[RMDB]
RNA sequence: GGGAACGACUCGAGUAGAGUCGAAAAUGCAUUCGAACGUAAUGCAAUCAAACUCGCGAUGCAGGGCAUGGGCGUAGAUGCAGACAAACUUGAUGCGCAUGGUAUUUGGACUGUUAAGCAGAUGACUCAAUUACUGAAUCGCCAGUAUGAGCAAGCAGUAGGAACUACACUUCGGUGUAGUUCCUACAAAAGAAACAACAACAACAAC
Reactivity to 2A3 in 0.01 (KOAc 150mM, MgCl2 10mM, bicine 150mM(pH8.5), 24C), signal-to-noise 2, nucleotides 027 to 156: u030g010c000a000u010u020c040g100a300a080c120g030u250a040a010u000g010c040a000a010u120c060a000a110a060c070u020c040g010c000g050a030u100g000c010a030g000g000g050c060a020u040g070g000g030c040g040u030a070g000a130u050g000c070a030g050a110c010a020a150a000c000u090u120g030a010u100g080c070g010c060a080u160g060g000u090a130u050u060u030g070g040a070c020u010g050u090u090a090a050g000c070a020g000a150u020g080a130c000u000c020a000a160u160u070a060c010u020g020a030a050u070c010g030c060c020a000g000u010a010u050g020a000g000c050a070a000g110c050a000
Reactivity to DMS in 0.01 (KOAc 150mM, MgCl2 10mM, bicine 150mM(pH8.5), 24C), signal-to-noise 1, nucleotides 027 to 156: u000g040c000a140u010u010c010g040a160a220c160g070u000a120a010u000g020c000a030a150u000c010a100a090a010c030u000c110g060c020g010a180u010g020c030a160g000g010g050c070a030u000g000g020g030c040g050u000a120g000a160u000g040c010a060g000a130c070a090a110a080c050u010u000g000a120u000g040c050g030c020a030u020g040g010u000a050u010u000u010g000g000a120c080u030g050u010u000a030a140g000c000a110g000a180u000g020a040c020u010c020a180a100u000u010a070c010u000g010a080a060u010c080g000c030c000a040g020u000a050u010g000a050g000c010a040a060g020c020a160
The record gives the reactivity of an RNA of 207 nucleotides to 2A3 and DMS. The DMS profile rests on 1,836 reads. For 2A3 the reverse transcriptase was SuperScript II with manganese. DMS adducts were read by reverse transcription with MarathonRT. The 2A3 profile rests on 935 reads. Source: RMDB library OK3TST, as collected in RNAgym.